RNA sequence: GGGAACGACUCGAGUAGAGUCGAAAACGGCUGCGAUGUUAAAAAUGCAUGGUGAGGAUCUCAAACAAUUUGCUAUUGUGGAUGUUGUCAUUAAGGAGCCGGUAGGUGGUGCUCACCACAACCCAGCCUUACUCAUGCAAUUCGUUGCAUGAGUAAGAAAAGAAACAACAACAACAAC
Reactivity to DMS in 0.01 (KOAc 150mM, MgCl2 10mM, bicine 150mM(pH8.5), 24C), signal-to-noise 5, nucleotides 027 to 126: c050g010g010c020u000g000c030g010a080u000g010u010u000a020a080a090a130a080u010g000c040a040u000g000g010u000g000a070g000g010a050u000c060u000c080a090a080a040c040a030a040u010u010u010g010c150u010a100u000u000g010u000g000g010a060u000g010u000u010g010u010c020a070u000u010a090a220g010g010a090g020c020c050g010g010u010a080g030g030u000g030g020u000g010c150u000c110a050c010c010a020c020a070a130c040c010c010a140g000c190
Reactivity to 2A3 in 0.01 (KOAc 150mM, MgCl2 10mM, bicine 150mM(pH8.5), 24C), signal-to-noise 2, nucleotides 027 to 126: c010g000g000c010u080g010c070g020a010u040g040u170u110a190a150a130a000a040u130g010c020a020u040g040g020u020g010a030g030g050a040u040c000u010c050a100a130a050c040a060a060u070u060u270g050c030u090a040u050u090g020u020g070g000a060u080g110u180u100g100u090c010a030u010u090a120a060g070g010a030g080c020c100g070g020u070a090g110g090u040g040g050u070g040c080u100c040a000c020c010a000c000a010a030c000c000c020a010g040c010
Conditions: 150 mM KOAc, 10 mM MgCl2 and 150 mM bicine (pH 8.5), 24 C. The record gives the reactivity of an RNA of 177 nucleotides to DMS and 2A3. For DMS the reverse transcriptase was MarathonRT. The DMS profile rests on 5,080 reads.